This 207-nucleotide RNA was probed chemically with 2A3 and DMS. It was measured as part of the RMDB library OK3TST. For 2A3 the reverse transcriptase was SuperScript II with manganese. For DMS the reverse transcriptase was MarathonRT. The RNA was probed in 150 mM KOAc, 10 mM MgCl2 and 150 mM bicine (pH 8.5) at 24 C.
RNA sequence: GGGAACGACUCGAGUAGAGUCGAAAAUGAACUGGCUGCUAGGAUCUGCCCCAACCUGUAAAGUUCAGUGUGCAAGGAAAGACAUCAGAAGAGAAGAUGGGAUGAGAGAACAAUUGAGGGAACAAUAAAAGGCCACAAGAAUGCAAAGGGUGACAAAGGUCUUAGUGAUAUUCGUAUCACUAAGACCAAAAGAAACAACAACAACAAC
Reactivity to 2A3 in 0.01 (KOAc 150mM, MgCl2 10mM, bicine 150mM(pH8.5), 24C), signal-to-noise 4, nucleotides 027 to 156: u090g010a040a030c040u030g040g010c020u020g010c040u060a050g020g040a070u020c030u110g050c000c000c010c000a000a030c020c030u060g030u160a110a090a060g020u050u080c030a030g010u040g030u030g110c050a050a040g040g010a100a100a010g050a020c030a050u110c050a050g070a130a010g030a030g010a090a000g020a040u080g020g030g000a020u060g000a020g000a000g010a060a030c040a050a140u040u080g020a060g010g010g010a050a000c010a000a020u120a070a090a020a010g030g020c010c000a010c010a050a040g080a060a010u070g020c040a090a010a000g050g010g000u050g010a030c040a020a080a050
Reactivity to DMS in 0.01 (KOAc 150mM, MgCl2 10mM, bicine 150mM(pH8.5), 24C), signal-to-noise 1, nucleotides 027 to 156: u020g030a090a130c020u000g000g040c000u000g000c020u020a110g020g030a130u000c080u020g000c030c010c000c000a090a080c040c000u010g010u000a070a040a080g000u010u010c030a100g030u000g030u010g080c000a100a130g010g000a060a080a130g040a100c050a030u000c050a110g010a050a090g000a060g010a050a050g000a070u020g030g000g010a040u000g000a130g010a110g020a040a080c050a070a110u010u000g010a060g000g020g010a080a100c010a020a090u010a070a050a080a060g000g010c000c020a030c110a000a120g000a040a060u000g000c050a030a010a110g000g020g000u000g010a080c020a060a040a150